[RMDB]
RNA sequence: GGGAACGACUCGAGUAGAGUCGAAAAGGCAGGCACAUGGCUAGCGGAUUUGGCGGGCACGGACAGGCCCGACCUGGAUCUCUACGGCGUGGACCUGGGCAUGGCGCUGUUCCGGCCGGACCCUCGACUGAAACUGCGCGCGCAUGAUGUGCGCCAGGAUCGUUUAGAUGUUCGCAUCUAAACGAUCAAAAGAAACAACAACAACAAC
Reactivity to 2A3 in 0.01 (KOAc 150mM, MgCl2 10mM, bicine 150mM(pH8.5), 24C), signal-to-noise 3, nucleotides 027 to 156: g040g000c020a010g000g000c040a020c020a120u060g140g000c060u030a020g050c030g040g020a050u040u020u110g010g040c000g000g020g000c070a080c170g080g100a070c120a120g010g090c000c010c010g120a260c030c000u040g070g010a040u020c030u000c020u100a100c150g050g000c010g040u060g000g020a080c010c010u000g010g020g010c010a080u150g030g000c090g000c090u050g010u110u100c020c000g010g010c010c000g080g000a110c010c010c000u040c020g150a090c050u100g020a090a110a080c000u010g000c020g000c000g000c000g030c060a040u250g050a150u190g240u020g010c000g000c000c000a010g010